RNA sequence: GGGAACGACUCGAGUAGAGUCGAAAAAUACAGCGUAAUCGAGCGGAGGAAAACGGCACUCCGAAAAUCCGGUACGAUUAUGUUCCCACUGCGUCGACGCUAGAUGCAGAACCGGAUUGCCGAGGAAUGUUUCACUAUCGUUCGCGAUAGUGAAACAAAAAGAAACAACAACAACAAC
Reactivity to 2A3 in 0.01 (KOAc 150mM, MgCl2 10mM, bicine 150mM(pH8.5), 24C), signal-to-noise 1, nucleotides 027 to 126: a000u200a030c030a050g040c060g060u070a000a090u070c020g000a010g060c030g030g000a010g000g000a080a260a040a040c010g000g000c010a000c040u020c000c000g000a020a000a000a000u000c000c000g020g030u050a070c080g080a160u110u090a040u190g020u030u020c010c020c000a040c000u020g000c010g000u000c010g040a150c100g110c300u080a070g000a010u000g000c000a000g020a010a010c010c000g020g000a000u000u030g030c000c000g000a020g070g110a060a140
Reactivity to DMS in 0.01 (KOAc 150mM, MgCl2 10mM, bicine 150mM(pH8.5), 24C), signal-to-noise 2, nucleotides 027 to 126: a120u010a070c280a100g010c050g000u010a140a100u000c020g010a080g080c040g000g000a000g000g010a020a030a070a170c010g000g020c030a070c020u000c000c010g010a010a030a020a020u000c000c020g000g010u000a080c140g020a100u000u000a030u000g000u000u000c000c000c000a300c020u000g000c000g000u000c000g020a160c230g010c210u000a060g000a010u000g010c000a030g000a030a050c060c010g010g000a020u000u010g000c020c040g000a100g020g000a130a100